[RMDB]
RNA sequence: GGGAACGACUCGAGUAGAGUCGAAAAGAAACGCCUGUUGGCCGGCGCGCCUGACAUCCAAAUGGAGUUGCCGCGAGGCCCUCUUCCGUCGAGAUCCUGGGAGACGAUCGCGGUCAGCCCACAGAAAGGGUAUACAUAUCUUCGGAUAUGUAUACCCAAAAGAAACAACAACAACAAC
Reactivity to DMS in 0.01 (KOAc 150mM, MgCl2 10mM, bicine 150mM(pH8.5), 24C), signal-to-noise 3, nucleotides 027 to 126: g000a170a080a100c140g010c040c000u030g030u030u010g010g020c070c050g000g000c000g010c050g000c050c010u000g010a070c080a110u020c070c040a120a120a110u050g010g000a150g020u000u010g020c060c000g000c030g000a090g010g020c120c080c070u000c010u000u000c040c010g000u060c160g000a070g010a110u000c060c050u010g030g000g010a040g010a030c180g000a090u000c000g000c020g010g000u060c030a070g000c030c010c000a050c170a120g000a110a060a050
Reactivity to 2A3 in 0.01 (KOAc 150mM, MgCl2 10mM, bicine 150mM(pH8.5), 24C), signal-to-noise 3, nucleotides 027 to 126: g050a030a030a000c050g030c000c050u050g040u050u060g040g010c000c000g070g000c000g000c040g000c000c000u010g020a010c000a070u050c010c010a040a050a130u200g010g000a170g030u020u020g010c000c000g010c030g010a010g040g000c050c020c010u020c000u020u010c000c020g050u070c040g030a030g010a160u080c000c030u060g000g000g000a010g000a010c040g050a020u020c000g000c000g010g020u020c010a000g030c000c020c000a060c010a010g140a070a100a020